[RMDB]
An RNA of 177 nucleotides, treated with 2A3 and read out base by base. Values are in units of 0.01, from 0 to 300, in steps of 10.
RNA sequence: GGGAACGACUCGAGUAGAGUCGAAAAAGUCAGUACGUACGCGUACUGACAAUCGGACUCGUUUUGACGAGUGGCUUCUCCGGGCGCCUAUCCCCCGGCCACAGACGUAGGCAUACGUGCCUACGAAACCAUACCGAAGCUUCGGCUUCGGUAUGGUAAAAGAAACAACAACAACAAC
Reactivity to 2A3 in 0.01 (KOAc 150mM, MgCl2 10mM, bicine 150mM(pH8.5), 24C), signal-to-noise 5, nucleotides 027 to 126: a000g000u010c000a010g000u010a010c010g000u020a020c260g000c010g120u000a000c000u000g000a000c010a000a020u050c040g120g050a040c000u000c010g030u050u060u120u300g170a050c000g010a010g010u010g030g010c080u060u040c000u060c040c000g010g020g010c060g030c010c000u090a170u170c010c000c000c000c010g000g030c030c010a090c030a070g130a050c040g000u000a000g000g000c010a010u030a040c190g060u010g000c000c000u010a000c010g010a020a010
The 2A3 profile rests on 3,005 reads.